[RMDB]
RNA sequence: GGGAACGACUCGAGUAGAGUCGAAAAAUACGCCCGGAGUACAUUUCCAAUGGAACUAGGGAACCCCUCCGGUCGUAUCCAACCUCUGUUUCGGCAGAGGAUACCGUGCUCCACAGCUGGAAGGCUGUGGGCCCGAGAGAAGCGCUCUCUCUCGCCCCCUAACUAACCACUUCGGUGGUUAGUUAGGAAAAGAAACAACAACAACAAC
Reactivity to 2A3 in 0.01 (KOAc 150mM, MgCl2 10mM, bicine 150mM(pH8.5), 24C), signal-to-noise 1, nucleotides 027 to 156: a030u010a000c000g010c020c000c010g040g000a010g030u150a090c020a150u040u060u000c020c010a080a170u170g090g110a160a110c100u120a300g040g000g030a020a030c070c020c000c010u010c000c010g000g020u000c000g020u010a010u040c010c020a040a050c000c010u000c010u010g030u030u080u110c210g130g000c000a000g000a010g000g000a000u020a010c020c050g070u110g010c020u070c030c000a010c000a020g000c010u120g000g150a120a120g110g010c000u010g000u000g020g000g030c080c030c000g020a000g000a010g010a060a040g100c070g030c080u060c020u000c000u010c000u010c090g030c040c000c000